RNA sequence: GGGAACGACUCGAGUAGAGUCGAAAAACUUAGGGACCGGACAAUAUCGAUUCCCUGUGGUUGGUAACGCCAAGUUCAACACUGUAUACAUCUUGUCAGAUGAGACUACCCCUCUGAACAUCAUUGGGUGUGGCUGGGAAGGUAACUACUUACGGAGAACUACCCUGCUAUUCGUAGCAGGGUAGUUAAAAGAAACAACAACAACAAC
Reactivity to DMS in 0.01 (KOAc 150mM, MgCl2 10mM, bicine 150mM(pH8.5), 24C), signal-to-noise 2, nucleotides 027 to 156: a050c060u010u000a050g000g050g010a020c060c010g050g000a070c060a100a190u010a300u010c010g020a060u000u010c000c000c000u010g010u000g010g040u010u000g000g010u000a060a110c050g020c030c040a040a100g010u010u010c020a090a050c040a070c030u010g010u000a110u010a120c040a040u000c030u030u020g110u000c040a120g000a120u010g020a140g010a190c060u000a120c090c010c020c020u000c060u000g000a080a070c120a070u000c080a070u000u000g000g000g000u000g010u000g020g040c040u030g010g000g010a100a100g000g000u000a040a090c070u000a070c050u000u010a080c110g020g030a220g030
Reactivity to 2A3 in 0.01 (KOAc 150mM, MgCl2 10mM, bicine 150mM(pH8.5), 24C), signal-to-noise 2, nucleotides 027 to 156: a000c020u040u040a040g000g000g010a000c010c030g140g030a050c160a200a130u100a080u230c010g060a120u080u010c010c000c000u060g020u070g000g020u120u050g010g040u070a010a010c000g000c030c020a080a090g010u000u090c020a020a030c020a000c030u080g050u050a070u030a080c020a030u000c010u020u090g110u070c020a000g010a130u030g030a040g020a060c070u070a060c000c000c040c050u030c050u030g050a100a100c020a130u120c000a040u080u100g040g000g000u090g030u020g050g000c000u070g000g020g020a040a020g000g070u070a020a080c020u060a010c040u080u020a010c050g100g000a090g000